Overview
Structure probing data (2A3 and DMS) for a 177-nucleotide construct. Source: RMDB library OK2TST, as collected in RNAgym. Reactivities are given for positions 27 through 126.
[RMDB]
RNA sequence: GGGAACGACUCGAGUAGAGUCGAAAAUUGAACACCUCCUAUGUGCUGGGCAUUAUUCCAAGUGCUGGGAAUGAUGGCGUGAGCAGGACAGAGGCUCUGCCCUGUUUGGGUUUGUGUUCUGGUGGAAUACCACUGGCUUAUUCGUAAGCCAGUGGUAAAAAGAAACAACAACAACAAC
Reactivity to 2A3 in 0.01 (KOAc 150mM, MgCl2 10mM, bicine 150mM(pH8.5), 24C), signal-to-noise 2, nucleotides 027 to 126: u050u010g010a020a000c010a010c020c030u000c020c020u190a110u220g080u020g010c020u040g020g060g020c040a050u050u060a030u030u070c000c040a060a040g140u070g200c090u180g010g010g030a000a060u020g040a010u020g070g080c120g120u140g050a010g000c000a000g000g020a000c010a010g070a120g080g070c040u000c040u110g000c010c000c000u000g050u060u030u070g010g010g000u050u080u120g000u020g010u020u000c000u050g010g050u080g110g090a050a050
Reactivity to DMS in 0.01 (KOAc 150mM, MgCl2 10mM, bicine 150mM(pH8.5), 24C), signal-to-noise 3, nucleotides 027 to 126: u000u000g000a040a030c020a030c000c240u000c000c010u010a100u020g030u010g000c030u000g010g020g010c150a060u000u000a040u010u000c010c000a090a110g030u010g020c150u000g010g000g010a030a030u000g000a020u010g000g010c020g020u000g010a050g010c010a050g000g010a020c050a010g010a130g020g000c110u020c120u010g020c020c000c010u000g000u000u000u000g010g000g000u010u000u010g010u010g010u000u010c010u010g000g020u000g010g000a110a190
For 2A3 the reverse transcriptase was SuperScript II with manganese. DMS adducts were read by reverse transcription with MarathonRT. The RNA was probed in 150 mM KOAc, 10 mM MgCl2 and 150 mM bicine (pH 8.5) at 24 C.